Description:
The data come from the RNA Mapping Database (RMDB), library 15KLIB. The record gives the reactivity of an RNA of 170 nucleotides to DMS and 2A3. DMS adducts were read by reverse transcription with MarathonRT.

[RMDB]
RNA sequence: GGGAACGACUCGAGUAGAGUCGAAAACUCCCCUCGGCGGGCCGUCCAUUGGGUUCACACCCCCAGGCCGCGGGCCGGCUACUCUUCUUUCUCUUUCGUCGUCAUCCCUGGCCAGCCUCCGGAGUUCAAACAAGACCCUUCGGGGUCUUGAAAAGAAACAACAACAACAAC
Reactivity to DMS in 0.01 (KOAc 150mM, MgCl2 10mM, bicine 150mM(pH8.5), 24C), signal-to-noise 4, nucleotides 027 to 129: c000u030c000c020c010c100u030c080g020g030c040g000g040g050c010c040g070u020c020c050a190u020u040g040g030g010u010u030c140a150c080a250c220c060c010c090c050a090g040g060c120c080g000c080g020g020g100c030c020g010g020c040u000a070c130u000c070u000u000c060u000u120u020c000u040c020u030u070u010c090g000u010c100g030u020c070a070u000c010c020c030u050g030g040c060c080a090g000c050c050u020c110c010g030g020a000g040u040u060c050a000a050a190
Reactivity to 2A3 in 0.01 (KOAc 150mM, MgCl2 10mM, bicine 150mM(pH8.5), 24C), signal-to-noise 3, nucleotides 027 to 129: c020u060c010c030c010c040u050c040g060g000c030g030g040g020c010c010g000u040c020c010a180u050u110g010g000g000u210u140c060a010c000a020c080c010c020c000c040a050g000g000c010c000g130c070g020g050g020c000c000g020g000c000u060a060c050u090c020u100u080c000u030u140u000c000u010c000u040u070u080c030g020u000c030g000u000c040a020u030c060c000c000u000g030g010c050c000a010g000c000c000u010c020c040g030g040a090g000u060u090c050a030a000a030
Description
High 2A3 reactivity points to a flexible backbone, as in loops and unpaired stretches. The 2A3 profile rests on 4,142 reads.